[RMDB]
RNA sequence: GGGAACGACUCGAGUAGAGUCGAAAACGAGCCUCGUUCGCGAGGCUCGAAAGGCGGCGAAAGCUCGACUAAAUGUCGAAAGUGUAACGCCAAUCCCACUCAAAAGGCUGCCGUUCGCGGCAGCCAACAACAUAGUUCAGUUCGCUGAACUAUGUUGAAAAGAAACAACAACAACAAC
Reactivity to DMS in 0.01 (KOAc 150mM, MgCl2 10mM, bicine 150mM(pH8.5), 24C), signal-to-noise 4, nucleotides 027 to 126: c030g010a020g000c000c000u000c000g030u010u010c170g020c020g020a010g010g000c010u000c000g010a000a040a100g000g020c120g010g010c070g010a060a130a250g010c070u000c000g000a020c000u000a060a140a080u010g010u000c010g000a020a060a100g010u000g000u010a100a130c000g000c010c010a090a160u000c000c010c000a130c230u010c150a070a070a110a090g000g000c000u000g020c000c000g000u000u020c200g020c030g000g010c000a000g010c010c000a010a030
Reactivity to 2A3 in 0.01 (KOAc 150mM, MgCl2 10mM, bicine 150mM(pH8.5), 24C), signal-to-noise 4, nucleotides 027 to 126: c020g000a000g010c000c000u000c010g020u080u030c080g000c010g110a000g010g000c010u000c000g010a000a000a000g000g000c050g000g000c060g080a150a030a010g040c020u010c010g000a000c010u160a300a140a110u270g000u000c000g020a110a030a100g080u100g040u100a090a010c000g000c000c000a000a050u010c000c010c000a010c030u170c060a050a090a010a050g000g000c010u000g000c020c000g020u040u090c280g010c020g100g000c000a000g000c000c000a000a000

Chemical mapping of a 177-nucleotide RNA with DMS and 2A3.
The data come from the RNA Mapping Database (RMDB), library M2PK50.
The RNA was probed in 150 mM KOAc, 10 mM MgCl2 and 150 mM bicine (pH 8.5) at 24 C.
Values cover nucleotides 27 to 126.